[RMDB]
RNA sequence: GGGAACGACUCGAGUAGAGUCGAAAACACACCGUGACCGGCCUGGCCCAGGACGGCGACGGAGUGGAGGUCACCUGCCGUACCCCCGACGGCCCGGUGCGCCUGAAGGGCACGCACGCCCUGUCGUGCCUGGGCGCGCACGGCGGUGCGGUGCGUGCUACCGGGUGGAGUUCGCUCCACCCGGUAGAAAAGAAACAACAACAACAAC
Reactivity to 2A3 in 0.01 (KOAc 150mM, MgCl2 10mM, bicine 150mM(pH8.5), 24C), signal-to-noise 1, nucleotides 027 to 156: c060a030c040a030c060c000g000u040g200a160c020c050g110g050c000c030u080g080g200c030c040c000a000g050g000a050c060g010g030c010g080a060c020g010g080a040g040u120g010g140a060g000g090u060c000a000c010c000u010g020c010c010g130u150a150c120c050c000c000c040g010a030c050g020g000c000c040c030g020g000u020g000c150g010c000c000u040g070a070a090g000g000g020c040a000c070g140c000a070c180g010c000c000c000u000g000u010c030g000u020g120c000c020u070g000g040g000c110g000c000g000c030a050c020g000g010c000g000g000u000g000c000g030g000u000g000c010g010u010g000

Background: Chemical mapping of a 207-nucleotide RNA with 2A3. Reactivities are given for positions 27 through 156. The 2A3 profile rests on 656 reads. The reactions ran in a buffer of 150 mM KOAc, 10 mM MgCl2 and 150 mM bicine (pH 8.5), at 24 C. It was measured as part of the RMDB library OK3TST.